[RMDB]
RNA sequence: GGGAACGACUCGAGUAGAGUCGAAAAGAUAUGGAUCCGAUAAGUUGCUACUCCAACAGCUCGGAAACGAGACAUGGAGGUCAACUUUUGACGGAUCCUAAGUCAAACGCCAAGUUCGCUUGGCGAAGUCAUACGAAUUCUUCGGAAUUCGUAUGACAAAAGAAACAACAACAACAAC
Reactivity to DMS in 0.01 (KOAc 150mM, MgCl2 10mM, bicine 150mM(pH8.5), 24C), signal-to-noise 3, nucleotides 027 to 126: g000a020u000a300u000g010g000a020u000c000c000g000a110u000a000a010g010u000u000g000c150u000a300c010u010c000c010a020a090c240a200g010c010u000c000g010g000a060a080a190c000g000a020g000a020c070a190u000g010g000a010g010g000u010c010a010a020c000u000u000u000u000g000a180c100g010g000a000u000c000c000u010a030a070g000u000c020a060a070a150c030g010c000c000a010a010g000u000u000c160g010c000u000u000g010g000c000g000a020a050
Reactivity to 2A3 in 0.01 (KOAc 150mM, MgCl2 10mM, bicine 150mM(pH8.5), 24C), signal-to-noise 3, nucleotides 027 to 126: g020a020u070a030u150g000g000a000u000c010c010g000a050u010a060a000g010u000u010g030c090u140a300c010u030c000c000a080a120c090a200g040c020u010c000g050g000a050a050a030c010g000a000g020a030c050a070u100g000g000a000g010g000u010c000a000a000c000u010u020u070u160g270a130c010g000g000a000u000c000c000u000a040a010g050u000c040a130a030a040c010g000c000c000a010a000g030u040u110c220g010c190u000u010g010g000c000g020a060a020